[RMDB]
This 177-nucleotide RNA was probed chemically with 2A3 and DMS. The RNA was probed in 150 mM KOAc, 10 mM MgCl2 and 150 mM bicine (pH 8.5) at 24 C.
RNA sequence: GGGAACGACUCGAGUAGAGUCGAAAAGAUAUGGAGCCUGGUAGGGAGCUCAUCGGAAACGAUAGAGCGUUGAUCUACCUGGCUCCUAAGUCAAAGUCCGUGGGUUAGUUCGCUAACCCACGGACAAGUUACCUGAUAACUUCGGUUAUCAGGUAACAAAAGAAACAACAACAACAAC
Reactivity to 2A3 in 0.01 (KOAc 150mM, MgCl2 10mM, bicine 150mM(pH8.5), 24C), signal-to-noise 2, nucleotides 027 to 126: g020a010u100a050u190g000g010a010g000c020c010u020g050g000u010a000g030g040g010a020g000c010u010c010a000u000c000g010g020a110a060a030c020g000a000u140a200g000a020g010c020g020u110u030g010a010u000c000u000a000c000c000u000g000g000c010u000c000c000u000a000a000g000u010c010a020a010a000g000u000c000c000g040u000g000g010g000u000u000a010g010u050u120c230g000c180u000a000a010c040c050c000a000c000g000g000a000c000a000a010
Reactivity to DMS in 0.01 (KOAc 150mM, MgCl2 10mM, bicine 150mM(pH8.5), 24C), signal-to-noise 2, nucleotides 027 to 126: g010a020u010a300u000g010g000a010g030c000c000u000g000g000u000a020g000g010g000a030g010c000u010c000a020u010c000g000g000a120a120a150c020g000a000u000a170g010a010g010c000g020u010u020g040a050u010c000u000a020c000c000u000g000g000c000u000c000c000u000a010a060g010u000c020a090a060a170g020u010c000c010g020u000g020g000g020u000u000a000g010u000u010c290g010c000u030a000a020c000c000c000a010c000g000g000a000c000a000a020